[RMDB]
RNA sequence: GGGAACGACUCGAGUAGAGUCGAAAACAGCCCGUCUUCGGACGGGCUGAAACCGGAAGCCGAAGCCGAACGGCAAGGCGAACCGGAACGGCAACGGCAAAAAAACCAUAAUGUUCGCAUUAUGGAAGAUAGAGAAUACGUUCGCGUAUUCUCUAUCAAAAGAAACAACAACAACAAC
Reactivity to 2A3 in 0.01 (KOAc 150mM, MgCl2 10mM, bicine 150mM(pH8.5), 24C), signal-to-noise 2, nucleotides 027 to 126: c000a000g000c000c010c030g010u000c000u020u040c170g100g010a000c000g000g010g010c010u000g000a020a010a000c010c010g010g080a090a020g000c020c010g010a030a010g000c000c000g050a080a040c060g010g000c040a010a070g110g010c020g010a030a030c000c010g000g030a090a030c010g020g020c020a010a010c000g020g020c010a060a070a020a010a000a000a030c000c010a000u000a000a000u010g020u030u050c220g020c110a000u000u010a000u010g000g040a000a020
Reactivity to DMS in 0.01 (KOAc 150mM, MgCl2 10mM, bicine 150mM(pH8.5), 24C), signal-to-noise 3, nucleotides 027 to 126: c010a000g000c010c000c000g010u000c000u020u010c190g010g000a010c000g010g000g020c000u000g000a010a040a110c020c010g000g040a140a270g020c000c000g010a060a300g000c010c000g030a060a200c030g000g000c070a050a130g000g010c130g000a060a100c000c000g000g000a060a080c010g010g000c020a030a290c030g010g030c030a000a000a040a040a040a050a080c010c000a030u000a000a000u000g000u000u020c210g000c000a020u000u010a000u000g000g020a070a040
An RNA of 177 nucleotides, treated with 2A3 and DMS and read out base by base. For 2A3, 4,878 sequencing reads were counted. The RNA was probed in 150 mM KOAc, 10 mM MgCl2 and 150 mM bicine (pH 8.5) at 24 C.